Overview:
Chemical mapping of a 177-nucleotide RNA with 2A3 and DMS. 2A3 adducts were read by reverse transcription with SuperScript II with manganese. The RNA was probed in 150 mM KOAc, 10 mM MgCl2 and 150 mM bicine (pH 8.5) at 24 C. Source: RMDB library OK1LIB, as collected in RNAgym. Reactivities are rounded to 0.1 and cut off at 0 and 3. DMS adducts were read by reverse transcription with MarathonRT. For 2A3, 8,732 sequencing reads were counted.
RNA sequence: GGGAACGACUCGAGUAGAGUCGAAAACUGACAGCUGAAAUUGCGUCGAGGAGGAAUCCUCAGUUAGCUGUCCAGAACCGAAACUGGUAUGGUAAGUUUGGGCAGAUACUGAGCAUCAGUUAGGCCGUCAAGCUUAGAUUUUCGAAUCUAAGCUUGAAAAAGAAACAACAACAACAAC
Reactivity to 2A3 in 0.01 (KOAc 150mM, MgCl2 10mM, bicine 150mM(pH8.5), 24C), signal-to-noise 8, nucleotides 027 to 126: c020u020g010a000c010a060g000c000u050g060a050a120a150u280u210g030c030g050u100c080g050a040g020g000a020g030g110a110a080u020c000c000u000c000a000g000u010u070a010g000c000u000g000u000c010c010a030g030a090a020c010c030g050a080a060a060c060u100g070g050u290a130u180g070g020u080a130a090g030u040u060u020g020g010g000c000a010g010a030u050a060c010u020g010a020g040c030a050u070c010a020g020u030u060a080g140g000c010c010g040
Reactivity to DMS in 0.01 (KOAc 150mM, MgCl2 10mM, bicine 150mM(pH8.5), 24C), signal-to-noise 7, nucleotides 027 to 126: c050u000g000a030c030a050g000c000u000g010a030a080a100u030u030g010c150g000u010c130g000a020g000g000a010g020g050a150a100u000c030c000u000c000a060g010u010u010a030g020c010u000g020u010c020c050a040g000a070a060c010c030g010a060a130a100c120u020g010g020u020a080u030g000g000u020a130a080g000u000u000u000g000g020g010c020a020g000a100u030a010c010u000g000a110g000c170a140u020c040a010g000u000u000a200g000g000c010c010g010